[RMDB]
The record gives the reactivity of an RNA of 177 nucleotides to 2A3 and DMS.
RNA sequence: GGGAACGACUCGAGUAGAGUCGAAAAGCUGGGAUUACAGGCACCAGCAACCAAGCCCGGCUAAUUUUUCUAGUUUUAGUAGAGAUGGGGUUUCACCAUGCUGGCCAGGCUGGUCUUGAACUCCUGAGGGAUAAUACGUAUUCGUACGUAUUAUCCCAAAAGAAACAACAACAACAAC
Reactivity to 2A3 in 0.01 (KOAc 150mM, MgCl2 10mM, bicine 150mM(pH8.5), 24C), signal-to-noise 4, nucleotides 027 to 126: g000c000u010g000g000g110a160u170u150a150c110a150g110g000c040a050c020c000a000g000c000a000a000c010c010a050a010g020c000c000c000g020g010c030u040a060a160u100u160u070u050u020c040u040a200g050u060u100u200u200a190g040u060a050g010a020g000a080u070g060g000g010g000u050u080u120c040a060c000c000a040u110g040c070u110g060g040c000c000a020g000g000c010u000g000g000u020c050u060u120g060a050a020c010u030c020c000u030g040a090
Reactivity to DMS in 0.01 (KOAc 150mM, MgCl2 10mM, bicine 150mM(pH8.5), 24C), signal-to-noise 5, nucleotides 027 to 126: g000c000u000g000g000g000a130u010u040a120c120a060g000g010c300a170c020c020a040g000c010a170a090c040c010a050a080g000c000c000c040g010g010c000u020a030a070u010u000u020u020u010c010u020a030g000u040u010u050u020a090g020u010a030g000a050g000a040u010g000g010g000g020u020u050u030c160a120c000c010a030u020g000c140u000g010g000c010c050a070g000g010c050u000g000g020u010c080u010u030g000a040a080c290u010c000c000u000g000a190
Source: RMDB library OK1LIB, as collected in RNAgym. The RNA was probed in 150 mM KOAc, 10 mM MgCl2 and 150 mM bicine (pH 8.5) at 24 C.